[RMDB]
RNA sequence: GGGAACGACUCGAGUAGAGUCGAAAAGCAUUUAGUCUACGUUGGAGGUAAACAAAUACGGGUCCUGCUUAGGAGAAAAGAAAAACGUCUUACAGCCAGUGUCUAAACUCCAAACAACGGAAUGUAUACACCCAUCAAGUUUCGACUUGAUGGGUGUAAAAGAAACAACAACAACAAC
Reactivity to 2A3 in 0.01 (KOAc 150mM, MgCl2 10mM, bicine 150mM(pH8.5), 24C), signal-to-noise 2, nucleotides 027 to 126: g000c000a010u000u000u180a040g000u000c030u050a060c100g030u020u020g040g000a040g020g010u070a080a040a000c020a010a100a040u160a150c090g070g040g000u000c000c060u040g040c010u060u010a070g000g020a090g030a000a100a010a050g270a120a130a030a060a000c000g020u020c010u000u000a000c010a030g060c110c040a010g000u070g010u080c000u040a110a000a020c000u000c000c000a020a150a070c040a020a020c030g040g020a070a000u000g000u000a000u000
Reactivity to DMS in 0.01 (KOAc 150mM, MgCl2 10mM, bicine 150mM(pH8.5), 24C), signal-to-noise 1, nucleotides 027 to 126: g000c070a130u000u000u000a080g000u030c050u000a080c180g050u000u000g000g000a050g000g000u000a000a050a030c170a140a000a160u010a110c170g000g050g000u010c100c060u020g000c110u000u010a050g020g000a020g000a220a000a090a050g020a020a060a010a100a120c240g000u020c000u000u030a020c200a030g020c000c000a040g060u020g000u020c070u000a030a050a070c000u000c000c000a000a000a030c180a180a000c080g000g000a020a020u000g000u000a130u010